RNA sequence: GGGAACGACUCGAGUAGAGUCGAAAAGUGGCGGCCGGGGCGGGAGCACGCGGGCGGGGCCGGCCCGGCUGCCUGGCUUAACCCUGACGUGCCGCUCGUCCCGCCUGCAGCCCUAGGCGGCGUCGAAAUAUAAAGGCAGGUUCGCCUGCCUUUAUAUAAAAGAAACAACAACAACAAC
Reactivity to 2A3 in 0.01 (KOAc 150mM, MgCl2 10mM, bicine 150mM(pH8.5), 24C), signal-to-noise 2, nucleotides 027 to 126: g070u060g030g000c010g000g000c010c000g000g020g030g040c030g000g030g020a070g040c030a020c150g090c030g000g000g020c000g000g000g000g020c000c000g060g050c000c000c000g010g000c000u010g010c020c020u000g030g000c010u080u110a100a080c010c000c000u010g010a020c010g030u100g030c000c020g030c050u060c010g040u020c000c010c020g000c010c000u040g000c040a050g020c000c040c010u040a060g010g030c010g020g020c000g000u020c020g000a070a150
Reactivity to DMS in 0.01 (KOAc 150mM, MgCl2 10mM, bicine 150mM(pH8.5), 24C), signal-to-noise 2, nucleotides 027 to 126: g010u000g010g030c000g010g000c020c010g000g000g000g010c010g000g000g010a140g030c120a080c140g010c070g000g000g030c040g010g000g010g020c030c010g000g000c000c030c010g000g010c030u000g020c000c010u030g000g010c060u010u000a170a100c030c010c010u010g010a030c030g000u030g010c000c010g000c020u010c110g010u000c000c010c000g010c010c000u010g000c050a120g010c080c060c040u000a130g000g020c020g010g000c030g000u010c030g010a070a080